Chemical mapping of a 177-nucleotide RNA with DMS and 2A3. The data come from the RNA Mapping Database (RMDB), library OK2TST. The 2A3 profile rests on 2,130 reads. The RNA was probed in 150 mM KOAc, 10 mM MgCl2 and 150 mM bicine (pH 8.5) at 24 C. For 2A3 the reverse transcriptase was SuperScript II with manganese.

[RMDB]
RNA sequence: GGGAACGACUCGAGUAGAGUCGAAAAAAACACCAGAUCCGGACUGCUAAAAUCCAUGAGAGGAACGGGACAUCGGAAACACAGAACGCAGGAGAUCACAGAAGGAUACAACUACGGAGACAAGGACUCACAAGAGUUAUUUCGAUAACUCUUGUGAAAAAGAAACAACAACAACAAC
Reactivity to DMS in 0.01 (KOAc 150mM, MgCl2 10mM, bicine 150mM(pH8.5), 24C), signal-to-noise 5, nucleotides 027 to 126: a050a060a070c100a070c070c030a140g020a090u000c040c040g010g000a120c070u010g010c090u020a060a060a070a090u000c030c030a040u000g010a080g030a100g000g010a070a060c080g010g010g010a080c080a060u010c060g000g000a080a070a060c100a050c090a080g010a070a070c140g010c050a040g000g020a070g000a050u000c060a050c090a070g010a050a030g020g000a070u000a040c080a040a040c070u000a080c070g000g010a060g000a050c060a050a070g000g000a110c150
Reactivity to 2A3 in 0.01 (KOAc 150mM, MgCl2 10mM, bicine 150mM(pH8.5), 24C), signal-to-noise 2, nucleotides 027 to 126: a000a030a000c040a000c030c000a020g020a060u030c060c040g020g040a050c030u050g040c060u180a150a070a020a100u000c020c000a050u090g020a030g010a020g110g020a070a030c020g030g020g040a030c020a070u070c030g080g000a040a080a000c050a000c000a040g130a170a000c050g000c030a010g060g040a070g000a030u020c030a030c020a040g110a100a010g050g010a020u030a110c030a050a000c040u060a020c030g070g020a010g010a010c030a020a060g080g020a020c030